[RMDB]
RNA sequence: GGGAACGACUCGAGUAGAGUCGAAAAGAUAUGGAGCCUUGGACAUGAGGCCAUUCGGAAACGAAUGGUCCUCAACAGCCAAAGGCUCCUAAGUCAAAAGCCCUACCGUCUUCGGACGGUAGGGCAACUAAUGAGGACGGUUCGCCGUCCUCAUUAGAAAAGAAACAACAACAACAAC
Reactivity to 2A3 in 0.01 (KOAc 150mM, MgCl2 10mM, bicine 150mM(pH8.5), 24C), signal-to-noise 2, nucleotides 027 to 126: g020a010u020a030u060g000g010a000g010c010c020u030u020g020g000a080c110a300u300g010a010g030g000c020c000a000u030u010c000g030g030a020a020a000c000g000a000a000u020g010g000u180c000c040u000c030a010a000c060a020g010c000c000a010a080a120g010g020c000u000c000c000u000a000a000g000u000c010a020a010a160a060g010c000c000c000u010a010c000c000g000u000c030u090u170c300g150g010a020c020g010g000u000a000g010g000g010c000a020a000
Reactivity to DMS in 0.01 (KOAc 150mM, MgCl2 10mM, bicine 150mM(pH8.5), 24C), signal-to-noise 2, nucleotides 027 to 126: g030a040u000a100u020g000g000a000g000c010c000u000u000g000g010a030c070a230u010g010a010g000g000c000c000a000u000u000c000g010g010a020a040a060c000g020a020a000u000g000g000u010c010c000u000c000a110a090c230a190g000c000c000a010a060a080g010g010c000u000c000c000u000a000a070g000u000c020a080a120a140a180g030c010c000c000u000a000c000c010g000u000c010u010u030c280g010g000a020c010g000g020u000a000g000g000g000c000a010a000